[RMDB]
RNA sequence: GGGAACGACUCGAGUAGAGUCGAAAAACGCGGAGUACGCUCCGCGACAACACUUAUUUCGACCCGCUAACCGAGACCUAUGGGUCGUUAAAUUACGUCUCUAUCUUACUCACAUAACAUCGCACAAAAAACGUGGUUCGGUUCGCCGAACCACGAACCUGUCUAACGAGUUCGCUCGUUAGACAGGAAAAGAAACAACAACAACAAC
Reactivity to 2A3 in 0.01 (KOAc 150mM, MgCl2 10mM, bicine 150mM(pH8.5), 24C), signal-to-noise 1, nucleotides 027 to 156: a000c000g000c000g000g000a000g000u030a020c060g070c070u030c000c000g010c010g000a030c020a050a000c030a000c100u180u120a160u110u190u060c000g000a000c000c000c000g000c200u190a010a010c000c020g030a020g000a000c000c000u030a020u190g000g000g000u000c000g030u010u010a010a000a000u200u060a000c010g000u000c000u030c040u030a170u050c010u040u120a030c050u080c260a030c040a080u260a160a000c010a090u160c080g040c230a050c050a010a060a010a050a080a020c000g020u000g000g000u000u000c010g000g000u020u060c150g000c000c000g000a000a000c000c000a000c010g000a000a000